The record gives the reactivity of an RNA of 177 nucleotides to 2A3 and DMS. The reactions ran in a buffer of 150 mM KOAc, 10 mM MgCl2 and 150 mM bicine (pH 8.5), at 24 C. For 2A3, 14,566 sequencing reads were counted. The data come from the RNA Mapping Database (RMDB), library OK1LIB. Values cover nucleotides 27 to 126.

RNA sequence: GGGAACGACUCGAGUAGAGUCGAAAAUACAUUCGCCACUCUAGGAGGGACGAUGUACUGCAAUGAAUCUUAGCUGUUCGCGAGUGCAAUCUUACAGAUAUAAAGUCCGCCACAGGAUUUGUCAUUACAGUAUAGGCAUAUUCGUAUGCCUAUACUGAAAAGAAACAACAACAACAAC
Reactivity to 2A3 in 0.01 (KOAc 150mM, MgCl2 10mM, bicine 150mM(pH8.5), 24C), signal-to-noise 9, nucleotides 027 to 126: u080a000c010a030u030u110c030g020c030c010a090c020u030c020u060a050g050g040a040g010g060g030a030c030g030a020u060g040u100a080c040u060g060c060a040a160u110g040a040a030u040c020u040u090a070g030c060u040g060u130u080c040g000c020g030a020g020u050g020c040a030a070u020c020u060u120a060c030a060g080a040u040a000u050a160a110a010g030u000c010c010g030c060c030a090c040a060g020g020a030u030u060u080g090u050c060a070u050u170a060
Reactivity to DMS in 0.01 (KOAc 150mM, MgCl2 10mM, bicine 150mM(pH8.5), 24C), signal-to-noise 8, nucleotides 027 to 126: u030a080c070a090u010u010c040g020c010c050a060c060u010c020u010a090g010g010a050g000g010g010a060c030g000a080u010g010u020a060c050u000g010c100a070a070u020g000a060a070u020c020u020u000a090g020c050u010g010u010u010c120g010c070g020a070g000u010g000c120a070a070u000c060u010u030a090c110a110g000a060u010a080u020a050a040a080g010u010c010c010g010c090c080a070c140a120g000g000a040u010u010u010g000u000c050a120u010u010a150